[RMDB]
RNA sequence: GGGAACGACUCGAGUAGAGUCGAAAAGGGGCCAGGGCCUUAAACUCACGAUUGACCAAGUCAGGGCGAAGAUCUGGGUCCUUGGGUUUGCGCGUUGUGAUUGGCGCUCCGCCUUUGCCUUUGCCAGUAGCGAUCCAUCAUUCGUGAUGGAUCGCUAAAAAGAAACAACAACAACAAC
Reactivity to DMS in 0.01 (KOAc 150mM, MgCl2 10mM, bicine 150mM(pH8.5), 24C), signal-to-noise 1, nucleotides 027 to 126: g000g000g000g020c030c130a020g010g000g000c030c100u030u000a030a060a070c050u000c040a080c120g000a100u010u000g020a050c040c060a120a090g010u010c030a090g000g020g000c040g010a120a100g010a090u030c090u000g010g000g020u010c000c010u000u000g020g000g000u000u010u000g020c130g000c030g040u000u000g020u020g000a150u020u010g000g000c060g010c040u000c050c220g010c010c030u090u010u000g010c010c040u000u000u000g000c050c000a180g000
The record gives the reactivity of an RNA of 177 nucleotides to DMS. For DMS, 1,225 sequencing reads were counted. The RNA was probed in 150 mM KOAc, 10 mM MgCl2 and 150 mM bicine (pH 8.5) at 24 C. Values are in units of 0.01, from 0 to 300, in steps of 10.